[RMDB]
RNA sequence: GGGAACGACUCGAGUAGAGUCGAAAAUGCAACAAUGGGCAAUCCGCAGCCAAGCUCCUGAAGCCUUAUAGGCAAUGGAGAAGGUUCAGAGACUAAAUGGCAGUGGGCCAACUUGUUGGCUUAAGAUAUAGUCCGUCCCAGCUGAAAGGCUGUCUGCCUACGUUCUGCUCUUCGGAGCAGAACGUAGAAAAGAAACAACAACAACAAC
Reactivity to 2A3 in 0.01 (KOAc 150mM, MgCl2 10mM, bicine 150mM(pH8.5), 24C), signal-to-noise 1, nucleotides 027 to 156: u180g040c140a150a030c070a140a020u100g040g070g000c030a010a050u140c090c000g010c020a000g000c000c000a050a060g040c010u020c030c010u030g030a100a020g010c040c010u290u300a150u190a250g000g000c000a000a040u120g000g010a040g020a000a000g040g000u090u110c050a000g180a000g000a070c030u070a070a070a070u170g010g040c010a030g010u070g000g010g000c000c010a030a030c070u050u150g010u010u020g030g000c030u030u110a080a000g030a030u030a010u030a200g010u050c060c010g010u080c030c010c000a000g000c000u050g080a030a050a050g080g000c030u000g030u040c010u030g030c000